[RMDB]
RNA sequence: GGGAACGACUCGAGUAGAGUCGAAAAGAAUUUGAAUUGUCUUCGCCUGAUGUUGAACAAGUCAUUGAAGUGAAUCCUGUCGAUGGCCAGGUUCAUUUAAGGACAUCAUUUGCUUAUCGCUAUCCAACGCGAUAAUCGUGUUCGCACGAUUAUCGCGAAAAGAAACAACAACAACAAC
Reactivity to 2A3 in 0.01 (KOAc 150mM, MgCl2 10mM, bicine 150mM(pH8.5), 24C), signal-to-noise 2, nucleotides 027 to 126: g000a050a160u250u210u220g070a010a020u210u160g060u030c020u010u050c010g200c050c130u090g010a130u080g060u230u190g000a050a050c070a000a090g030u050c020a020u000u190g080a110a000g010u030g050a000a080u070c100c020u080g010u000c000g050a140u100g080g000c020c000a000g010g000u000u000c000a030u000u060u170a020a000g070g030a000c000a000u010c020a050u070u000u040g090c000u110u060a160u240c030g000c060u030a030u020c030c050a080a040
This 177-nucleotide RNA was probed chemically with 2A3. Source: RMDB library OK1LIB, as collected in RNAgym. 2A3 adducts were read by reverse transcription with SuperScript II with manganese.